[RMDB]
RNA sequence: GGGAACGACUCGAGUAGAGUCGAAAAGUGGCUGGCUCGGCGUCUCGGCACGGGGAAGUGCACCGCUGGCUGCCGAGUUUGACGAGAUCUGCAUCAAUGACGGUCGGCUUCUGCUUAAAGGUUGGGCCACGUUGAAUGGGUUCGCCCAUUCAACGUGAAAAGAAACAACAACAACAAC
Reactivity to 2A3 in 0.01 (KOAc 150mM, MgCl2 10mM, bicine 150mM(pH8.5), 24C), signal-to-noise 3, nucleotides 027 to 126: g140u100g050g010c050u010g000g010c010u020c010g000g000c010g020u030c010u000c000g010g010c020a010c000g040g000g060g070a050a040g040u060g120c080a080c030c030g120c150u010g100g000c080u020g000c000c000g000a010g000u040u050u070g030a020c020g000a000g010a180u010c020u080g000c000a020u070c020a060a170u170g050a070c030g090g030u020c000g000g000c010u070u020c030u100g020c000u050u050a050a110a050g050g000u020u020g030g020g000c030
Reactivity to DMS in 0.01 (KOAc 150mM, MgCl2 10mM, bicine 150mM(pH8.5), 24C), signal-to-noise 2, nucleotides 027 to 126: g000u010g000g030c000u000g010g000c020u000c010g010g000c000g010u000c010u020c020g020g000c000a050c030g010g000g000g040a130a150g030u020g000c150a110c070c020g020c110u000g030g000c120u000g020c020c020g010a030g000u000u020u020g030a030c000g000a060g000a070u030c020u020g000c030a060u040c120a050a100u020g010a080c090g000g000u010c060g010g000c010u010u020c020u000g030c040u000u000a080a080a090g020g010u000u010g000g020g010c000